[RMDB]
RNA sequence: GGGAACGACUCGAGUAGAGUCGAAAAAUAGUUAAGCUUGCGCUUGCCUAUUUAGGCAUACUUCUCAGGAUGGCGCGUUGCAGUCCAACAAGAUCCAGGGACUGUACAGAAUUUUCCUAUACCUCGAAAAACAUUCGCUUGUUCGCAAGCGAAUGAAUCUAUAAAGAGAGUUCGCUCUCUUUAUAGAAAAAGAAACAACAACAACAAC
Reactivity to DMS in 0.01 (KOAc 150mM, MgCl2 10mM, bicine 150mM(pH8.5), 24C), signal-to-noise 1, nucleotides 027 to 156: a090u000a110g020u000u000a030a120g010c040u000u010g020c150g000c050u010u000g030c110c000u020a110u010u000u010a030g000g010c010a060u000a020c030u000u010c040u010c060a210g010g010a050u010g010g000c050g080c060g000u000u000g010c030a050g000u000c000c010a130a210c060a070a130g010a130u010c050c110a130g000g030g010a020c010u000g060u000a130c110a160g000a140a080u000u000u000u010c040c010u010a140u000a070c060c000u000c050g010a050a110a110a120a250c010a000u000u000c000g010c000u000u010g000u000u000c300g040c010a000a010g000c010g000a000a000u000g010a000a040
Reactivity to 2A3 in 0.01 (KOAc 150mM, MgCl2 10mM, bicine 150mM(pH8.5), 24C), signal-to-noise 2, nucleotides 027 to 156: a000u110a010g050u030u010a100a000g050c080u050u100g000c040g020c010u010u040g000c020c010u130a270u160u170u290a010g000g000c010a010u040a130c040u140u100c090u040c140a030g120g010a070u100g020g000c000g000c010g050u030u050g000c010a010g000u020c000c010a030a010c010a170a160g040a160u110c120c040a050g000g020g000a000c020u000g010u040a000c000a030g140a100a060u090u040u040u080c000c010u050a070u100a120c020c020u070c070g040a070a000a030a100a020c030a010u000u010c000g000c010u010u000g010u060u050c140g010c070a000a000g000c000g000a000a000u000g000a000a000